The record gives the reactivity of an RNA of 177 nucleotides to 2A3 and DMS.
[RMDB]
RNA sequence: GGGAACGACUCGAGUAGAGUCGAAAACAACUGUUAUCUUGCCACUGCAUUGUUAACACUCUAACAAAUAGAGUUGAAGUUUAAUCCACCUGCUCUACAAAGGGCUGGUGAAGCUGCUAACUUUUGUACAUUAAAGAUUCUUCGGAAUCUUUAAUGUAAAAGAAACAACAACAACAAC
Reactivity to 2A3 in 0.01 (KOAc 150mM, MgCl2 10mM, bicine 150mM(pH8.5), 24C), signal-to-noise 3, nucleotides 027 to 126: c010a030a030c030u070g020u080u070a050u080c020u040u090g000c020c020a130c070u110g000c020a030u060u040g020u040u050a060a020c030a020c020u010c000u020a110a070c040a150a170a190u030a020g030a000g010u010u080g060a040a000g000u040u060u140a030a050u050c010c000a010c000c020u020g000c000u000c000u050a130c080a100a230a060g020g000g000c000u000g000g000u000g000a000a020g010c040u030g020c020u030a040a070c000u090u060u020u130g060u030
Reactivity to DMS in 0.01 (KOAc 150mM, MgCl2 10mM, bicine 150mM(pH8.5), 24C), signal-to-noise 3, nucleotides 027 to 126: c030a080a090c090u000g010u000u000a040u000c040u000u000g020c040c080a100c130u000g010c050a050u020u000g000u000u000a050a070c050a040c040u010c010u010a020a130c180a090a130a170u000a040g000a020g000u000u000g020a050a080g000u000u000u000a050a070u000c070c010a020c010c000u000g010c000u000c000u000a120c300a080a120a070g000g000g010c000u000g010g020u000g010a030a040g000c080u000g000c100u010a050a040c030u000u000u020u000g010u030
Record summary: For DMS the reverse transcriptase was MarathonRT.